[RMDB]
RNA sequence: GGGAACGACUCGAGUAGAGUCGAAAAGAUAUGGACCGUAUCAAGAGGUACAGUCCCUCGGAAACGAGAACCUGUACUACCCACCUUGGUACGGUCCUAAGUCAAAAGAUGCGCUUCGGCGCAUCAAGUAAUGCAAAGAGUUCGCUCUUUGCAUUACAAAAGAAACAACAACAACAAC
Reactivity to DMS in 0.01 (KOAc 150mM, MgCl2 10mM, bicine 150mM(pH8.5), 24C), signal-to-noise 7, nucleotides 027 to 126: g000a020u000a300u010g000g010a010c000c000g010u000a000u000c010a010a010g010a120g030g000u000a010c000a020g000u010c170c170c010u000c010g010g000a100a080a180c010g000a010g010a080a110c300c020u010g010u000a010c010u000a050c060c050c090a300c130c000u000u000g010g000u000a010c000g010g000u000c000c000u000a000a060g000u000c030a090a080a090a080g000a000u000g000c000g010c000u000u010c180g030g000c000g010c000a000u000c000a020a110
Reactivity to 2A3 in 0.01 (KOAc 150mM, MgCl2 10mM, bicine 150mM(pH8.5), 24C), signal-to-noise 2, nucleotides 027 to 126: g030a010u040a030u090g000g000a000c000c000g000u010a000u010c010a010a000g020a020g050g040u000a010c000a010g080u160c080c050c010u010c000g030g030a080a060a040c000g000a010g010a030a030c020c020u010g000u000a000c010u060a060c050c070c010a070c020c000u010u000g000g010u000a000c000g010g000u000c000c000u010a000a000g010u000c000a000a010a020a130g000a000u010g000c000g010c020u040u140c300g140g000c000g000c010a000u000c000a000a000